[RMDB]
RNA sequence: GGGAACGACUCGAGUAGAGUCGAAAAGGUCCGGACGAUGUUGGCCGAAACGGUCGACACCGAACUGUGGCAUGCCCAGCGGGUGCUGCAGGCCGCCUCGACGGCCGCGGUGGAUCUGUCUGGCUGCAGCAUGCCUCACGUUCGCGUGAGGCAUGCUAAAAGAAACAACAACAACAAC
Reactivity to DMS in 0.01 (KOAc 150mM, MgCl2 10mM, bicine 150mM(pH8.5), 24C), signal-to-noise 1, nucleotides 027 to 126: g010g010u000c000c010g000g000a240c070g020a050u000g020u000u000g000g000c000c000g000a100a080a100c140g020g050u010c000g010a020c010a030c000c010g000a060a080c030u000g030u000g020g000c000a050u000g000c090c000c030a050g010c010g000g020g020u010g000c000u000g000c030a120g030g010c000c010g000c010c100u000c230g010a070c000g000g000c010c010g010c000g000g000u010g000g000a020u000c000u000g000u000c020u000g010g000c300u000g000c130
Reactivity to 2A3 in 0.01 (KOAc 150mM, MgCl2 10mM, bicine 150mM(pH8.5), 24C), signal-to-noise 1, nucleotides 027 to 126: g090g000u000c020c010g010g000a010c040g020a070u050g000u000u010g010g010c040c020g080a300a250a060c210g020g000u000c000g000a000c000a000c000c000g040a080a000c030u010g040u090g120g040c030a050u070g000c020c020c000a040g020c020g020g000g000u060g000c050u010g020c020a250g000g000c000c020g060c020c060u250c110g300a300c010g030g050c000c010g000c000g000g020u050g060g090a040u000c000u120g170u060c030u030g050g000c050u060g020c000